About this RNA
Chemical mapping of a 177-nucleotide RNA with DMS and 2A3. The reactions ran in a buffer of 150 mM KOAc, 10 mM MgCl2 and 150 mM bicine (pH 8.5), at 24 C.
RNA sequence: GGGAACGACUCGAGUAGAGUCGAAAACGGCGUUAUGCAGUUGGAGAGUGUAUGAAGUUGGUCGAAAGUCUUGAAGAGCUUCAAGCAAAUAUUUCUGAACUUGAAAGAAUCAGAACUUCUGGUUCAAGCUACUACUUACGUUCGCGUAAGUAGUAGCAAAAGAAACAACAACAACAAC
Reactivity to DMS in 0.01 (KOAc 150mM, MgCl2 10mM, bicine 150mM(pH8.5), 24C), signal-to-noise 2, nucleotides 027 to 126: c060g000g000c010g030u000u020a070u020g070c080a050g010u010u000g000g020a090g010a020g010u000g010u010a050u000g030a070a070g020u010u000g010g030u000c050g000a080a110a070g020u000c040u000u000g020a060a070g010a130g010c130u010u000c040a020a050g020c050a100a080a070u000a090u000u000u010c040u000g000a050a050c080u000u000g010a100a040a140g010a050a050u000c070a030g000a110a160c150u020u000c010u000g010g000u000u000c010a100a120
Reactivity to 2A3 in 0.01 (KOAc 150mM, MgCl2 10mM, bicine 150mM(pH8.5), 24C), signal-to-noise 1, nucleotides 027 to 126: c020g050g000c010g020u060u000a070u090g020c030a030g040u080u090g040g010a060g000a010g030u070g020u020a060u040g070a050a040g020u020u090g050g040u010c010g040a070a090a030g060u020c010u040u000g000a060a050g070a110g300c120u060u040c020a010a000g000c010a020a090a050u110a130u080u110u070c040u060g030a030a070c020u070u060g030a120a120a080g020a030a020u040c040a030g020a090a300c010u110u030c000u050g020g000u000u010c000a010a010